An RNA of 177 nucleotides, treated with 2A3 and DMS and read out base by base. The reactions ran in a buffer of 150 mM KOAc, 10 mM MgCl2 and 150 mM bicine (pH 8.5), at 24 C.
[RMDB]
RNA sequence: GGGAACGACUCGAGUAGAGUCGAAAAAGCGCCCUCCUGCUCAGGAACUCUAUCGAGUAGAUGAGGAUGUGUCCGCCGUCGAGUACGGGAAGGGGGAGGAGGUUGAAGACCGCGAGCGCGAUGCUGAGAAUGCGACAAAAUUCGUUUUGUCGCAUUCAAAAGAAACAACAACAACAAC
Reactivity to 2A3 in 0.01 (KOAc 150mM, MgCl2 10mM, bicine 150mM(pH8.5), 24C), signal-to-noise 3, nucleotides 027 to 126: a000g000c010g010c000c000c010u000c000c010u030g130c000u010c020a050g060g020a050a070c000u000c030u050a200u090c050g090a060g210u160a050g090a100u170g120a030g090g040a050u130g080u030g110u080c000c000g030c030c000g030u030c050g110a080g070u140a010c020g000g050g080a120a060g200g020g010g000g010a010g000g010a010g010g020u020u110g090a060a030g030a060c020c050g030c040g050a020g000c000g010c010g010a050u090g010c010u020g020a020
Reactivity to DMS in 0.01 (KOAc 150mM, MgCl2 10mM, bicine 150mM(pH8.5), 24C), signal-to-noise 4, nucleotides 027 to 126: a180g020c030g020c040c000c010u000c000c000u000g010c000u000c030a150g020g000a170a070c060u000c010u000a110u000c040g010a160g010u000a100g010a050u010g000a100g000g000a030u000g000u010g000u010c020c000g020c030c010g010u000c040g010a170g010u010a020c030g000g010g000a070a100g030g000g010g000g010a060g010g000a070g000g010u000u000g000a100a130g010a160c080c020g010c080g020a090g010c020g020c000g010a070u010g010c050u000g000a280